This 177-nucleotide RNA was probed chemically with DMS and 2A3.
Conditions: 150 mM KOAc, 10 mM MgCl2 and 150 mM bicine (pH 8.5), 24 C.
The 2A3 profile rests on 2,487 reads.
2A3 adducts were read by reverse transcription with SuperScript II with manganese.

RNA sequence: GGGAACGACUCGAGUAGAGUCGAAAAUACAGGCUCCUUUCCAUGGAUGGAGACAGAGUGGGCAGAUCUGGGUGGAGUCUGAGGCCGCUAAAGGCAUCAGCAGCACAGAAGCAGAGUCUAGAUCAAACAAGGUUACGAAAUUCGUUUCGUAACCUUGAAAAGAAACAACAACAACAAC
Reactivity to DMS in 0.01 (KOAc 150mM, MgCl2 10mM, bicine 150mM(pH8.5), 24C), signal-to-noise 6, nucleotides 027 to 126: u010a130c120a110g020g000c010u010c020c030u000u000u010c020c030a090u000g020g010a150u000g000g000a100g010a100c070a060g000a130g010u000g010g000g000c070a070g010a090u010c040u010g010g000g040u000g010g000a110g020u010c010u010g000a050g010g030c010c010g010c160u000a060a090a110g020g010c010a030u000c030a010g010c060a150g010c020a050c060a040g010a080a100g010c080a070g000a060g020u010c030u000a070g000a100u010c090a070a080a220
Reactivity to 2A3 in 0.01 (KOAc 150mM, MgCl2 10mM, bicine 150mM(pH8.5), 24C), signal-to-noise 2, nucleotides 027 to 126: u130a020c040a010g000g070c050u070c010c000u090u140u080c070c010a080u130g170g040a070u060g010g030a130g020a040c040a010g130a020g040u120g000g000g000c020a030g020a090u030c010u040g030g050g020u020g010g050a090g030u030c000u000g000a020g010g020c000c020g000c220u250a140a070a100g030g000c020a020u020c020a000g010c010a010g010c020a020c000a060g070a090a000g010c030a010g010a000g040u030c010u050a050g000a200u090c080a050a040a070